[RMDB]
RNA sequence: GGGAACGACUCGAGUAGAGUCGAAAAUGGCUAAAAACAGCACCGUGCGUAGAUUCUGCUGGACGCUGAAUAACUAUACCGAAGAGGAUGUCGAUGUGCUGCAGAAGGACCUCACUGAGCUAUGUAAACGUGGACUGCAAUUCGUUGCAGUCCACGUAAAAGAAACAACAACAACAAC
Reactivity to DMS in 0.01 (KOAc 150mM, MgCl2 10mM, bicine 150mM(pH8.5), 24C), signal-to-noise 1, nucleotides 027 to 126: u020g030g030c040u020a050a090a040a080a150c130a010g000c050a030c090c080g000u050g000c130g040u000a110g000a240u000u000c020u000g050c060u060g000g040a070c040g020c020u000g010a140a050u000a130a140c020u000a060u000a190c000c020g000a080a100g000a170g040g000a040u000g000u000c060g050a150u010g010u000g020c000u040g000c020a080g020a090a060g000g050a060c090c010u000c000a130c030u000g000a040g010c020u000a080u010g010u020a040a050